[RMDB]
RNA sequence: GGGAACGACUCGAGUAGAGUCGAAAAGUUAUGGAAAACGUCUUAGCUACCACUACAACAACAAUGCUCGACGGUGAUGGUUCGACUUACUCGAAACCAUCACGUAGUGGUAGUCGUUCCCAUUCAACGCUCAUGCCUUGUUCGCAAGGCAUGAGCGAAAAGAAACAACAACAACAAC
Reactivity to 2A3 in 0.01 (KOAc 150mM, MgCl2 10mM, bicine 150mM(pH8.5), 24C), signal-to-noise 2, nucleotides 027 to 126: g050u080u100a110u210g050g080a050a050a000a050c020g030u040c040u100u130a030g010c000u020a000c000c010a000c010u000a000c000a200a000c020a090a000c050a060a130u190g060c010u090c120g070a050c030g060g010u000g000a010u010g010g030u000u000c010g000a020c050u120u240a120c020u070c020g000a040a020a020c000c000a010u000c000a010c000g000u010a000g010u000g000g000u000a020g000u000c010g000u000u010c000c000c010a000u100u080c050a070a070
Reactivity to DMS in 0.01 (KOAc 150mM, MgCl2 10mM, bicine 150mM(pH8.5), 24C), signal-to-noise 1, nucleotides 027 to 126: g080u000u040a130u000g040g000a040a060a080a050c040g000u000c100u000u020a140g050c030u000a020c030c000a010c000u040a020c000a120a050c170a100a070c240a030a050u000g010c000u000c130g000a080c120g070g000u000g000a000u000g000g040u000u000c030g000a060c290u020u020a060c230u000c040g000a020a020a150c000c000a010u000c000a020c010g010u000a000g040u010g000g050u000a010g020u000c030g000u000u000c000c030c000a090u020u000c100a040a110
Notes: Conditions: 150 mM KOAc, 10 mM MgCl2 and 150 mM bicine (pH 8.5), 24 C. Structure probing data (2A3 and DMS) for a 177-nucleotide construct. For 2A3, 1,610 sequencing reads were counted. The DMS profile rests on 585 reads. For 2A3 the reverse transcriptase was SuperScript II with manganese.